The record gives the reactivity of an RNA of 177 nucleotides to 2A3 and DMS. 2A3 is a SHAPE reagent: it acylates the 2'-hydroxyl of flexible nucleotides of all four kinds. The DMS profile rests on 10,914 reads. DMS adducts were read by reverse transcription with MarathonRT.
RNA sequence: GGGAACGACUCGAGUAGAGUCGAAAAAUGAGCGCAAGACCAACACCACACACUUGCGAGGCUACAGUGGUGAACAGAACUCAGGGUGCUAACAAAGGAGGCUAAGUCUGCGUGGCCCCACAAAGCAUGUCAUAGUGUAAUUCGUUACACUAUGACAAAAAGAAACAACAACAACAAC
Reactivity to 2A3 in 0.01 (KOAc 150mM, MgCl2 10mM, bicine 150mM(pH8.5), 24C), signal-to-noise 4, nucleotides 027 to 126: a010u090g000a020g020c010g000c050a070a030g030a060c000c030a050a030c020a010c010c010a010c000a010c000a020c060u040u050g030c080g110a090g100g000c040u100a030c050a070g010u020g040g000u010g020a040a040c030a040g060a080a020c010u010c060a020g060g050g040u080g040c030u080a060a050c030a070a100a020g070g010a050g020g000c010u070a080a000g030u000c020u030g020c030g020u040g010g030c000c000c010c020a020c020a020a080a030g060c070a060
Reactivity to DMS in 0.01 (KOAc 150mM, MgCl2 10mM, bicine 150mM(pH8.5), 24C), signal-to-noise 8, nucleotides 027 to 126: a080u010g010a120g010c040g020c040a060a060g010a110c030c060a100a140c090a060c020c010a060c070a100c140a110c110u000u000g020c080g010a110g010g000c050u000a070c160a070g020u000g010g010u000g000a080a070c150a080g010a060a070c050u010c020a060g010g000g030u010g010c050u010a060a070c110a040a100a110g010g010a080g010g010c050u000a070a080g000u000c040u000g020c090g020u000g000g010c030c010c010c060a080c180a040a080a080g010c150a140